Annotation:
An RNA of 177 nucleotides, treated with 2A3 and DMS and read out base by base. 2A3 adducts were read by reverse transcription with SuperScript II with manganese. Values cover nucleotides 27 to 126. Conditions: 150 mM KOAc, 10 mM MgCl2 and 150 mM bicine (pH 8.5), 24 C. The DMS profile rests on 1,372 reads.
[RMDB]
RNA sequence: GGGAACGACUCGAGUAGAGUCGAAAAGUGCUCUGCAUGACGAUGCGCGAUCAGACAGUCUCGUGGCCGAUCGGCGCUCGGCCAUGAUCAGCGUACGAGCGGCCGAUCGGCGCGCGCUCAGUACACGAGACGCAGUCGAUUUCGAUCGACUGCGUCUAAAAGAAACAACAACAACAAC
Reactivity to 2A3 in 0.01 (KOAc 150mM, MgCl2 10mM, bicine 150mM(pH8.5), 24C), signal-to-noise 1, nucleotides 027 to 126: g110u070g000c010u020c060u150g040c040a030u090g070a100c020g060a100u110g030c130g020c040g090a060u070c110a080g060a110c010a040g020u000c000u020c000g000u070g130g010c000c020g000a010u010c000g000g000c000g000c000u030c010g000g010c100c000a110u160g100a100u110c080a010g080c040g130u120a230c020g020a000g000c000g160g200c020c020g000a020u000c000g010g010c040g000c000g000c000g060c000u030c020a030g020u000a030c050a000c110g010
Reactivity to DMS in 0.01 (KOAc 150mM, MgCl2 10mM, bicine 150mM(pH8.5), 24C), signal-to-noise 1, nucleotides 027 to 126: g010u000g000c050u000c060u010g000c100a070u000g010a070c120g000a090u010g020c040g010c030g000a080u050c060a010g030a080c100a170g010u010c010u000c020g010u000g000g020c020c000g000a000u000c000g030g010c020g000c020u000c000g010g000c000c000a130u030g020a110u040c190a110g010c070g020u000a060c020g010a010g000c020g010g000c010c010g020a000u000c010g000g000c010g000c030g030c110g000c050u010c020a080g030u010a130c090a030c050g000